This 177-nucleotide RNA was probed chemically with DMS. Conditions: 150 mM KOAc, 10 mM MgCl2 and 150 mM bicine (pH 8.5), 24 C. DMS adducts were read by reverse transcription with MarathonRT.
RNA sequence: GGGAACGACUCGAGUAGAGUCGAAAAGAUAUGGACGAAAGGUACGAGGUAAGUGUAAGAAGACUCUGUAUCGGAAACGAUACAGAGUCUUCUGAGCUUACUACCCACCGUACUUUCGUCCUAAGUCCGUAAUAUUAUCCUUCGGGAUAAUAUUACGAAAAGAAACAACAACAACAAC
Reactivity to DMS in 0.01 (KOAc 150mM, MgCl2 10mM, bicine 150mM(pH8.5), 24C), signal-to-noise 5, nucleotides 027 to 126: g010a090u000a300u000g000g010a000c000g000a010a010a030g030g020u000a000c010g000a130g010g010u000a010a020g020u000g000u010a300a090g000a010a010g010a020c000u000c010u010g010u000a000u000c000g000g000a140a120a230c010g010a010u000a000c000a010g000a010g010u000c000u000u000c000u000g000a290g000c020u000u000a000c010u000a020c050c040c120a300c140c000g010u000a020c000u000u000u000c010g000u000c000c000u000a000a100g010u000c050